[RMDB]
RNA sequence: GGGAACGACUCGAGUAGAGUCGAAAAUGAAAGCUGUGUCAGCGAGGCGGGCGGAGGAUGAGGCCGUGCCCGGGCUCUGGCUGCAGCCGCCCGGGGACACGCCGUGCACCCUCGGGCUCCGGAAAAAACGCAAUUAUAUGUUCGCAUAUAAUUGCGUAAAAGAAACAACAACAACAAC
Reactivity to DMS in 0.01 (KOAc 150mM, MgCl2 10mM, bicine 150mM(pH8.5), 24C), signal-to-noise 6, nucleotides 027 to 126: u010g000a100a080a130g000c020u010g010u010g010u000c040a030g020c050g010a100g000g010c050g020g000g020c030g010g010a030g010g000a070u000g000a130g000g020c060c070g020u000g000c010c000c000g000g000g010c030u000c140u000g030g010c070u010g010c210a110g020c030c090g000c000c000c000g000g000g000g000a040c020a030c110g000c030c010g020u010g010c040a040c030c000c000u000c010g000g010g010c020u000c010c010g000g010a000a030a040a060a070
Reactivity to 2A3 in 0.01 (KOAc 150mM, MgCl2 10mM, bicine 150mM(pH8.5), 24C), signal-to-noise 3, nucleotides 027 to 126: u160g000a090a060a010g000c020u030g010u070g110u270c040a010g020c030g030a050g030g100c060g030g010g010c030g040g000a030g020g010a020u040g030a050g030g030c110c050g010u020g040c010c000c000g000g010g000c060u060c090u090g060g000c050u180g060c070a040g020c000c020g000c020c000c000g010g000g000g000a030c010a000c020g030c010c000g020u050g040c020a020c000c000c000u010c000g010g110g010c020u000c040c030g060g010a050a080a000a010a000